An RNA of 177 nucleotides, treated with DMS and 2A3 and read out base by base. For 2A3 the reverse transcriptase was SuperScript II with manganese. The data come from the RNA Mapping Database (RMDB), library M2PK50. The reactions ran in a buffer of 150 mM KOAc, 10 mM MgCl2 and 150 mM bicine (pH 8.5), at 24 C. The 2A3 profile rests on 1,212 reads.
RNA sequence: GGGAACGACUCGAGUAGAGUCGAAAACUCCUAUAGUUCGCUAUAGGAGAAAAUAAUAAGCACGAAAAACAUCUGGGCCUAACGUGCAGGCCAAAUAGAAAAAAAUCCAUUGCUUCGGCAAUGGAAAUCUAACAGUUAGGUUCGCCUAACUGUUAGAAAAAGAAACAACAACAACAAC
Reactivity to DMS in 0.01 (KOAc 150mM, MgCl2 10mM, bicine 150mM(pH8.5), 24C), signal-to-noise 2, nucleotides 027 to 126: c000u000c000c000u020a000u010a000g010u010u000c200g000c000u000a010u000a000g000g000a020g000a010a030a070a120u000a100a090u010a090a150g000c000a020c000g050a090a100a110a070a130c250a080u020c220u010g030g010g020c010c000u020a050a280c020g000u000g010c000a030g010g000c000c000a070a110a050u020a170g010a000a020a010a130a060a090a080u000c000c000a000u000u000g050c000u000u000c280g020g020c000a000a010u010g000g010a000a010a060
Reactivity to 2A3 in 0.01 (KOAc 150mM, MgCl2 10mM, bicine 150mM(pH8.5), 24C), signal-to-noise 1, nucleotides 027 to 126: c020u000c000c000u030a020u020a010g010u030u050c150g030c090u000a000u000a010g000g010a020g020a010a050a000a000u090a000a000u040a050a030g020c020a020c070g150a250a080a080a080a000c040a110u130c070u090g080g000g040c000c020u070a110a040c010g030u010g010c000a000g000g020c020c000a020a040a000u100a020g110a050a140a000a000a000a000a070u020c020c000a000u000u000g010c010u030u050c290g130g030c080a020a020u020g000g030a000a020a020